[RMDB]
RNA sequence: GGGAACGACUCGAGUAGAGUCGAAAAGAUAUGGAAGCGUUACUGACGCAAUGAGAGGGAGAAUGAUAUCGGAAACGAUAUACCAUUCGAGGAUCUCUUCAUUGCGUCAGUAACGCUUCCUAAGUCAUCAUAGGUUAUCCUUCGGGAUAACCUAUGAAAAAGAAACAACAACAACAAC
Reactivity to DMS in 0.01 (KOAc 150mM, MgCl2 10mM, bicine 150mM(pH8.5), 24C), signal-to-noise 3, nucleotides 027 to 126: g030a050u000a300u010g010g020a010a000g020c000g000u000u000a010c000u010g010a020c000g020c000a000a010u000g000a030g010a000g010g000g000a020g010a020a010u000g010a070u000a010u000c010g000g000a150a130a230c000g020a030u000a030u000a160c300c010a000u000u000c000g000a050g020g010a020u010c010u010c010u010u010c000a000u000u000g010c000g020u000c000a000g000u000a000a000c010g000c000u010u010c000c000u000a000a070g000u000c040a220